[RMDB]
RNA sequence: GGGAACGACUCGAGUAGAGUCGAAAAGGUAAAGCGGUGCAGGUUAAAUCGGAAAUAGUUUGGGUAUGCCUCGCUGCCCAAAUGAAAUUUAGAGGAUAAGGCAUUGGUUGGUGGUUCAGGUCUUGCCAAUGCUCGAAAACCAAAGGCUGAAAUAAGCGUAGCGUUAUCCGUUCGCGGAUAACGCUACAAAAGAAACAACAACAACAAC
Reactivity to DMS in 0.01 (KOAc 150mM, MgCl2 10mM, bicine 150mM(pH8.5), 24C), signal-to-noise 1, nucleotides 027 to 156: g000g020u010a030a080a040g010c090g030g010u020g040c060a030g000g030u010u000a030a070a100u000c080g000g000a090a080a080u000a250g000u000u020u010g010g010g020u010a000u010g010c030c030u010c110g000c100u000g000c000c000c000a000a050a010u000g000a090a160a150u000u010u050a050g000a030g050g000a140u020a120a120g000g010c020a080u000u000g010g000u000u020g010g040u000g060g060u000u000c160a040g010g020u020c020u000u010g070c000c020a000a060u000g000c000u020c030g010a060a060a040a100c080c070a040a100a140g020g050c080u020g000a060a020a060u000a020a090g010c140
Reactivity to 2A3 in 0.01 (KOAc 150mM, MgCl2 10mM, bicine 150mM(pH8.5), 24C), signal-to-noise 3, nucleotides 027 to 156: g040g020u050a060a020a050g040c070g010g010u020g000c020a040g000g010u010u060a080a080a070u170c100g040g030a080a050a070u050a060g000u010u010u000g030g000g010u030a040u210g020c010c030u060c060g010c010u010g000c000c000c030a000a020a000u050g000a000a060a030u120u210u100a080g000a010g020g020a010u050a080a020g020g000c000a000u020u020g020g000u000u060g030g020u030g010g020u070u090c020a040g010g080u030c000u030u020g000c000c000a020a000u010g000c010u010c070g030a010a010a000a000c020c000a030a010a050g070g000c050u070g060a110a040a010u110a070a000g000c040